[RMDB]
RNA sequence: GGGAACGACUCGAGUAGAGUCGAAAAGAUAUGGACCGCCAUACCGCUGAUGACCUACGUCGGAAACGACGUAGCAAGGCGAUGGACGGUCCUAAGUCAAACAACAACCUCUUCGGAGGUUGUUGAACUUAAGAUAGGGGUUCGCCCCUAUCUUAAGAAAAGAAACAACAACAACAAC
Reactivity to 2A3 in 0.01 (KOAc 150mM, MgCl2 10mM, bicine 150mM(pH8.5), 24C), signal-to-noise 4, nucleotides 027 to 126: g010a000u050a030u120g000g000a010c000c010g020c010c010a050u100a260c090c180g000c030u080g020a300u100g000a060c000c010u010a010c010g010u000c000g020g030a060a030a030c000g000a010c000g010u000a010g010c000a060a300g030g000c030g050a010u010g000g080a190c020g000g000u000c000c000u000a010a000g010u000c030a070a110a120c010a000a000c010a010a000c010c000u000c000u090u120c300g180g000a000g010g000u000u000g000u000u000g000a010a000
Reactivity to DMS in 0.01 (KOAc 150mM, MgCl2 10mM, bicine 150mM(pH8.5), 24C), signal-to-noise 7, nucleotides 027 to 126: g010a040u000a300u010g000g010a010c000c010g020c000c000a060u010a160c300c070g020c000u000g010a070u010g010a100c300c010u000a000c000g000u010c000g000g000a080a080a210c000g010a020c000g000u000a000g000c010a040a060g000g050c010g010a020u000g000g000a070c010g020g000u000c000c010u000a010a080g010u000c030a130a140a300c010a000a010c000a000a010c000c000u000c000u000u010c210g010g000a010g010g000u000u000g010u000u000g000a050a160